[RMDB]
RNA sequence: GGGAACGACUCGAGUAGAGUCGAAAACGGUUACGUCGAACCUGGUACGGGCCGGUCGUGCCAGCUGGCUCUAAAUCGUACGUAUGGUGAAACACUGCCUACCGCCGUGUGACUGAUGUGACACGAACGAGUCGUCGAGUUUCGACUCGACGACUCGAAAAGAAACAACAACAACAAC
Reactivity to DMS in 0.01 (KOAc 150mM, MgCl2 10mM, bicine 150mM(pH8.5), 24C), signal-to-noise 1, nucleotides 027 to 126: c050g000g000u000u030a040c190g070u000c000g000a230a050c020c000u010g040g050u000a010c010g010g100g000c030c000g020g000u000c170g000u000g060c080c080a130g000c000u000g070g010c040u000c150u010a060a040a090u000c090g000u000a000c020g090u020a040u000g000g020u010g000a230a270a020c000a060c090u000g000c000c090u000a080c250c040g020c020c050g070u000g030u000g030a250c160u000g000a140u020g010u000g000a000c000a040c000g030a080a190
The data come from the RNA Mapping Database (RMDB), library OK2TST.
Chemical mapping of a 177-nucleotide RNA with DMS.
The DMS profile rests on 526 reads.
For DMS the reverse transcriptase was MarathonRT.
Reactivities are rounded to 0.1 and cut off at 0 and 3.